Source: RMDB library OK3TST, as collected in RNAgym.
The record gives the reactivity of an RNA of 207 nucleotides to DMS and 2A3.
For DMS, 6,913 sequencing reads were counted.
Reactivities are given for positions 27 through 156.
RNA sequence: GGGAACGACUCGAGUAGAGUCGAAAAGAGGAGUGCUUUACUUCCAACUAUGUGGUUACUUUUGGAAUAGGUGUGGUGUGGUGCUGAAAAAAAUGUAUAUUCUGUUGAUUUGGGGUGGAGAGUUCUGUAGAUGUCUAUUAGGUCCGCUUGGUGCAGACGUAAUAAAUGACUUCGGUCAUUUAUUACGAAAAGAAACAACAACAACAAC
Reactivity to DMS in 0.01 (KOAc 150mM, MgCl2 10mM, bicine 150mM(pH8.5), 24C), signal-to-noise 2, nucleotides 027 to 156: g010a130g000g000a060g010u000g010c080u010u000u000a070c040u000u010c010c020a080a130c080u000a070u010g020u000g030g010u010u010a060c070u000u020u000u000g010g020a090a100u000a060g020g040u000g040u000g020g020u000g000u000g020g020u000g020c030u010g000a010a010a040a090a060a080a090u000g000u000a080u000a120u000u000c040u000g020u000u010g010a090u070u010u000g000g000g000g010u000g010g020a090g000a070g020u010u000c030u000g000u000a110g010a070u000g010u000c040u010a110u000u000a060g010g000u000c020c030g030c060u000u000g010g010u000g000c020a100g010a130
Reactivity to 2A3 in 0.01 (KOAc 150mM, MgCl2 10mM, bicine 150mM(pH8.5), 24C), signal-to-noise 4, nucleotides 027 to 156: g080a030g010g000a030g010u080g030c050u100u110u100a070c010u050u040c020c000a040a040c060u080a060u180g050u040g020g060u070u070a060c030u100u100u050u090g050g040a090a060u070a110g000g010u020g010u010g040g010u030g010u020g010g010u020g000c020u030g090a080a020a000a010a000a010a030u150g030u020a130u010a000u130u050c040u030g090u060u060g040a110u060u050u070g000g000g000g000u050g010g010a020g010a000g030u070u060c010u050g000u010a020g010a070u040g030u010c020u020a070u080u080a060g040g000u010c020c020g010c050u030u040g020g000u030g010c020a020g030a070